[RMDB]
RNA sequence: GGGAACGACUCGAGUAGAGUCGAAAAGCAAGCGGACAGCUCUGCACAUCUCCAGACCCUGAUCUGUCUUGGAGCCCUGGAGAUCCCUUGGAUUCUGACCUCCUGGAACUGGGGAGCAACCUGUCUCGUCCAUUAAGUGCUUCGGCACUUAAUGGACAAAAGAAACAACAACAACAAC
Reactivity to 2A3 in 0.01 (KOAc 150mM, MgCl2 10mM, bicine 150mM(pH8.5), 24C), signal-to-noise 1, nucleotides 027 to 126: g070c020a000a030g050c060g040g040a020c020a030g000c020u030c040u060g010c020a050c030a080u040c020u030c020c000a120g000a150c020c020c000u050g030a100u060c040u190g140u100c020u170u080g050g020a030g020c060c010c000u000g010g000a050g000a090u060c000c000c000u070u100g160g040a240u000u000c020u060g100a160c020c020u010c030c080u070g000g010a030a040c000u030g020g020g000g010a030g000c020a010a040c020c020u030g000u030c050u050c070
Reactivity to DMS in 0.01 (KOAc 150mM, MgCl2 10mM, bicine 150mM(pH8.5), 24C), signal-to-noise 1, nucleotides 027 to 126: g060c100a100a080g010c090g040g020a080c040a000g000c000u000c060u020g020c020a070c220a070u020c010u020c010c030a050g120a100c100c030c070u000g000a070u040c190u010g010u010c080u020u000g000g000a080g000c040c100c020u000g000g010a060g010a050u000c080c010c000u000u000g000g030a170u000u000c030u000g010a150c080c050u010c030c010u000g000g000a060a070c040u000g000g010g000g010a140g010c040a060a050c170c020u020g030u000c040u000c050